[RMDB]
RNA sequence: GGGAACGACUCGAGUAGAGUCGAAAACAGGAGUUCUGGGCUGUAGUGCGCUAUGCCGAUCGGGUGUCCGCACUAAGUUCGGCAUCAAUAUGGUGACCUCCCGGGAGCGGGGGACCACCAGGUUGCCUAAGGAGGGGUGAACCGGCCCAGGUCGGAAGUAUGUCUUAUACUUCGGUAUAAGACAUACAAAAGAAACAACAACAACAAC
Reactivity to DMS in 0.01 (KOAc 150mM, MgCl2 10mM, bicine 150mM(pH8.5), 24C), signal-to-noise 2, nucleotides 027 to 156: c040a100g000g010a140g040u000u000c000u010g000g010g030c000u010g000u000a040g020u000g010c000g050c040u000a030u010g010c000c000g000a050u000c060g010g020g010u000g000u000c230c160g000c040a050c040u000a050a090g020u000u000c040g010g020c030a020u000c040a050a050u000a050u010g020g020u010g020a030c040c000u000c000c010c020g010g020g020a160g010c030g000g010g010g020g000a010c020c010a000c010c010a010g010g050u000u000g020c010c010u000a100a100g010g010a160g000g000g010g010u000g000a030a060c010c020g010g010c010c000c010a020g010g010u000c020g000g010a130a210
Reactivity to 2A3 in 0.01 (KOAc 150mM, MgCl2 10mM, bicine 150mM(pH8.5), 24C), signal-to-noise 5, nucleotides 027 to 156: c050a030g090g050a070g080u150u040c010u010g010g000g000c010u030g030u140a070g020u050g070c020g000c030u010a010u020g000c010c010g030a050u040c060g080g000g010u020g020u020c080c150g120c040a000c000u070a150a160g010u010u010c000g000g000c000a010u010c000a000a030u050a040u070g010g010u020g010a100c010c000u040c020c000c020g050g080g070a160g120c110g000g000g010g000g020a070c070c010a000c000c000a000g030g000u000u020g000c000c000u090a200a070g160g080a050g000g100g010g000u030g010a030a020c010c010g000g000c000c030c010a010g010g000u010c000g020g020a060a040